This 177-nucleotide RNA was probed chemically with 2A3 and DMS. Conditions: 150 mM KOAc, 10 mM MgCl2 and 150 mM bicine (pH 8.5), 24 C. 2A3 adducts were read by reverse transcription with SuperScript II with manganese. The 2A3 profile rests on 1,842 reads.
RNA sequence: GGGAACGACUCGAGUAGAGUCGAAAACAACAGCCGGGCGGGACAUGGCCGUGGUCGUCGACCGGUGGUUCAGCGACGAUGCCUUCACAGACCGGUUCUAGCGGAGAUUGGGCGGCCGGCUCGACAACCAUACCUCCAUGUUCGCAUGGAGGUAUGGAAAAGAAACAACAACAACAAC
Reactivity to 2A3 in 0.01 (KOAc 150mM, MgCl2 10mM, bicine 150mM(pH8.5), 24C), signal-to-noise 2, nucleotides 027 to 126: c000a000a040c000a000g000c010c010g070g070g000c070g040g090g040a080c070a110u080g040g040c020c020g010u040g050g090u090c050g070u020c000g030a060c000c010g070g040u060g080g010u100u060c070a040g030c000g070a110c050g050a050u140g050c010c060u070u160c060a120c030a120g150a100c010c030g040g000u120u070c080u080a050g030c040g040g030a060g020a170u120u160g060g070g050c000g040g000c050c030g000g000c020u020c000g050a040c020a080a000
Reactivity to DMS in 0.01 (KOAc 150mM, MgCl2 10mM, bicine 150mM(pH8.5), 24C), signal-to-noise 2, nucleotides 027 to 126: c080a140a200c140a070g020c030c010g010g010g020c030g010g000g010a090c120a030u010g000g010c060c060g020u000g010g020u000c060g020u000c040g040a030c040c000g000g010u010g000g020u000u010c090a060g000c020g010a120c140g000a060u010g000c040c030u000u010c070a080c120a070g010a090c040c090g000g010u010u000c050u000a100g030c030g010g000a110g000a160u020u000g000g000g000c020g000g020c010c010g010g000c080u000c030g010a050c100a080a100